Record summary
An RNA of 177 nucleotides, treated with 2A3 and DMS and read out base by base. Source: RMDB library TTRDEL, as collected in RNAgym. For DMS the reverse transcriptase was MarathonRT. Reactivities are given for positions 27 through 126.
[RMDB]
RNA sequence: GGGAACGACUCGAGUAGAGUCGAAAAGAUAUGGACGCAGAACUACGAGAAUAAGCUCGAAGAACUCGGAAACGAGGGAGAGCGAAAUCUCGCUGCGUCCUAAGUCAAACCUCGCUUCGGCGAGGAACAGAUUAUGUACCUUCGGGUACAUAAUCUGAAAAGAAACAACAACAACAAC
Reactivity to 2A3 in 0.01 (KOAc 150mM, MgCl2 10mM, bicine 150mM(pH8.5), 24C), signal-to-noise 4, nucleotides 027 to 126: g030a010u070a040u130g000g000a000c000g000c020a010g000a130a130c170u210a060c300g010a000g020a020a060u110a100a010g000c010u010c010g220a300a040g030a080a020c010u010c010g020g000a060a040a030c000g010a010g020g000g000a050g000a000g000c020g000a030a050a020u000c000u000c000g000c020u000g010c000g010u010c000c000u010a010a000g000u020c000a010a020a110c010c000u000c010g000c000u050u080c300g160g010c000g000a000g000g000a010a010
Reactivity to DMS in 0.01 (KOAc 150mM, MgCl2 10mM, bicine 150mM(pH8.5), 24C), signal-to-noise 3, nucleotides 027 to 126: g020a040u000a300u000g000g030a020c020g010c000a010g010a130a040c150u000a300c000g000a020g000a020a030u000a130a300g010c000u000c000g020a140a110g000a130a150c000u000c010g020g020a070a070a180c020g010a010g000g000g000a060g010a020g020c000g000a010a130a070u000c010u000c000g000c010u000g000c010g000u000c000c010u000a000a040g000u000c010a130a080a140c010c000u000c000g020c000u010u020c170g030g000c010g000a010g010g000a030a090